An RNA of 177 nucleotides, treated with DMS and 2A3 and read out base by base. The RNA was probed in 150 mM KOAc, 10 mM MgCl2 and 150 mM bicine (pH 8.5) at 24 C. Reactivities are given for positions 27 through 126. It was measured as part of the RMDB library M2PK50.
[RMDB]
RNA sequence: GGGAACGACUCGAGUAGAGUCGAAAAUCACUGGACUUCGGUCCAGUGAAAAACAAAGACGGACGGCGAACGUCAAACGCUGACGUACGAAAGUACGAAAAAAAAGUACGCCCUUCGGGGCGUACAAUCUUAUACCAUUGUUCGCAAUGGUAUAAGAAAAAGAAACAACAACAACAAC
Reactivity to DMS in 0.01 (KOAc 150mM, MgCl2 10mM, bicine 150mM(pH8.5), 24C), signal-to-noise 4, nucleotides 027 to 126: u000c000a000c010u000g010g000a010c010u010u010c180g050g010u000c000c000a010g010u010g000a010a020a020a140a100c130a090a070a140g000a300c030g010g000a050c030g010g000c010g000a090a090c040g010u010c130a010a060a110c060g000c050u000g020a250c020g010u000a010c000g010a120a100a140g010u010a000c010g010a010a010a000a010a080a040a120a170g010u000a010c010g010c010c000c000u000u000c170g020g010g010g010c000g010u000a010c000a020a030
Reactivity to 2A3 in 0.01 (KOAc 150mM, MgCl2 10mM, bicine 150mM(pH8.5), 24C), signal-to-noise 3, nucleotides 027 to 126: u020c000a000c000u010g000g010a010c010u030u040c250g070g000u010c010c000a000g000u010g000a010a000a000a000a000c020a000a070a000g110a030c020g050g000a000c040g010g060c030g050a140a020c020g090u110c070a070a050a020c040g000c040u050g050a060c010g000u010a000c010g040a080a030a020g010u020a000c040g120a130a000a000a000a000a000a000a010g000u000a000c000g000c000c010c020u010u040c160g020g000g000g000c000g000u000a000c000a000a000